[RMDB]
An RNA of 207 nucleotides, treated with 2A3 and read out base by base. Source: RMDB library VIROID, as collected in RNAgym. 2A3 is a SHAPE reagent: it acylates the 2'-hydroxyl of flexible nucleotides of all four kinds. The 2A3 profile rests on 1,294 reads.
RNA sequence: GGGAACGACUCGAGUAGAGUCGAAAAGAAACAACUGAAGCUUCAACGCCUUUUUUUCCAAUCUUCUUUAGGACCGGGCCAAGGAGUAAGCCCGUGGAACCUUAGUUUUGUUCCCUCGGGACUUACUUGUGGUUCCUGUGGUGCACUCCUGACCCUGCACAAAUAUUCACUUCGGUGAAUAUUUGUGAAAAGAAACAACAACAACAAC
Reactivity to 2A3 in 0.01 (KOAc 150mM, MgCl2 10mM, bicine 150mM(pH8.5), 24C), signal-to-noise 3, nucleotides 027 to 156: g050a000a070a010c050a050a020c080u150g110a120a010g050c020u140u160c090a070a050c080g010c010c010u070u060u020u030u040u080u020c070c030a150a160u040c050u150u020c020u100u130u120a130g040g040a050c020c040g010g030g000c010c030a160a040g010g010a000g010u070a070a030g010c000c010c000g050u060g010g000a000a000c010c000u040u000a010g010u020u220u120u150g100u130u060c010c000c040u070c070g020g000g000a000c010u010u000a000c000u010u040g080u110g050g000u000u040c010c000u040g140u300g020g000u060g000c070a040c030u000c000c000u000g030a020c000c010c000u040g010